The data come from the RNA Mapping Database (RMDB), library OK1LIB. Chemical mapping of a 177-nucleotide RNA with DMS and 2A3. DMS adducts were read by reverse transcription with MarathonRT.
RNA sequence: GGGAACGACUCGAGUAGAGUCGAAAAAUGACCUUCGCAGUGGACGAGCCGCCGCGCGCGCUGGCAUCGACCGCCUCGUCCAGGCGGAAGGUGUCGAUCACAAACAUGGUCGCAUUUCGCGACACAAAGGUCCAGCAUAUUUCGAUAUGCUGGACCUAAAAGAAACAACAACAACAAC
Reactivity to DMS in 0.01 (KOAc 150mM, MgCl2 10mM, bicine 150mM(pH8.5), 24C), signal-to-noise 1, nucleotides 027 to 126: a030u000g000a050c000c000u050u010c100g010c000a030g070u010g030g000a010c060g000a080g000c130c070g030c050c090g030c220g030c180g000c080g070c130u050g000g000c080a030u000c100g000a070c110c040g000c200c070u050c130g010u000c090c060a110g010g000c010g000g000a000a030g000g000u020g000u060c000g000a040u000c120a060c050a060a100a120c130a140u000g020g030u000c000g010c000a130u000u040u100c300g040c000g010a000c000a090c150a000a150
Reactivity to 2A3 in 0.01 (KOAc 150mM, MgCl2 10mM, bicine 150mM(pH8.5), 24C), signal-to-noise 3, nucleotides 027 to 126: a010u220g080a050c000c000u050u040c040g000c020a120g060u010g030g000a010c080g010a030g060c110c010g020c010c010g050c010g000c020g000c010g000c140u080g010g000c000a040u050c040g110a090c000c000g000c000c000u010c030g100u000c020c030a000g030g000c000g030g010a050a040g000g000u000g030u020c050g000a210u220c010a050c070a070a150a060c070a110u230g160g000u000c000g010c000a020u180u260u180c100g010c000g070a030c080a000c020a060a260